[RMDB]
RNA sequence: GGGAACGACUCGAGUAGAGUCGAAAACUAACUGUGAGACCAACAAGUCGAGCAGAUGCGAAAGCAGGCCCAAGUGAUCCGGCGGUAGAAAGUGGAAUUGCCGUCGCUCAACGGAUAAAAGGUACCUUCAAAUGUUCCAGUUCGCUGGAACAUUUGAAAAAGAAACAACAACAACAAC
Reactivity to DMS in 0.01 (KOAc 150mM, MgCl2 10mM, bicine 150mM(pH8.5), 24C), signal-to-noise 2, nucleotides 027 to 126: c100u000a030a240c000u000g000u090g000a230g000a060c000c010a010a090c290a200a100g000u000c000g000a300g000c040a000g060a030u000g000c040g030a010a180a160g000c000a150g000g010c080c000c000a030a130g010u000g000a000u000c020c000g050g070c010g000g000u000a000g000a070a100a100g000u060g000g000a110a090u000u000g000c000c020g000u020c000g010c300u010c100a120a140c100g030g000a120u040a090a060a090a020g000g000u030a000c050c060u030
Reactivity to 2A3 in 0.01 (KOAc 150mM, MgCl2 10mM, bicine 150mM(pH8.5), 24C), signal-to-noise 4, nucleotides 027 to 126: c020u020a060a020c000u010g010u010g010a050g000a020c020c010a040a170c070a170a000g010u000c000g020a010g000c020a010g030a070u110g040c040g040a190a040a030g030c030a040g050g000c010c000c000a070a030g050u030g020a020u010c030c020g000g000c010g020g030u010a040g170a100a140a010g130u210g080g090a100a110u090u050g010c000c000g010u000c000g000c010u010c000a050a090c030g020g030a040u130a130a090a000a010g080g030u040a030c000c030u000